This 177-nucleotide RNA was probed chemically with DMS and 2A3.
Conditions: 150 mM KOAc, 10 mM MgCl2 and 150 mM bicine (pH 8.5), 24 C.

[RMDB]
RNA sequence: GGGAACGACUCGAGUAGAGUCGAAAAGAGCAGACCCAGCCGCCCUUCGUCCACGGCGACACGACGAGCAUCGGCACGCGCGGUCCGAGCCCGUACGGCCCGGCCAUGUGCGUGGCGUCGCCCGCGACGACUAAUUUAGUUUCGACUAAAUUAGUCGAAAAGAAACAACAACAACAAC
Reactivity to DMS in 0.01 (KOAc 150mM, MgCl2 10mM, bicine 150mM(pH8.5), 24C), signal-to-noise 9, nucleotides 027 to 126: g010a110g010c060a060g010a170c030c020c020a140g010c020c030g010c030c010c040u010u000c070g020u000c020c060a210c220g000g000c020g010a050c050a140c070g000a090c030g010a080g010c070a130u000c050g000g000c020a030c030g010c050g030c020g010g010u010c020c010g010a050g010c020c010c160g010u010a100c180g010g010c010c010c020g000g000c020c010a060u010g030u000g000c000g020u000g000g010c040g010u000c050g000c030c010c040g010c080g010a160
Reactivity to 2A3 in 0.01 (KOAc 150mM, MgCl2 10mM, bicine 150mM(pH8.5), 24C), signal-to-noise 7, nucleotides 027 to 126: g060a020g010c050a010g030a140c020c000c010a000g030c000c010g020c000c000c000u060u060c030g040u010c020c030a050c040g020g000c010g020a010c030a010c060g180a010c030g040a020g050c040a090u090c030g100g020c030a020c030g020c000g000c020g030g010u070c020c010g000a010g020c000c020c040g050u140a080c090g020g000c010c000c000g010g000c010c010a140u240g020u010g010c010g010u020g030g060c010g020u030c030g000c000c000c010g040c020g030a070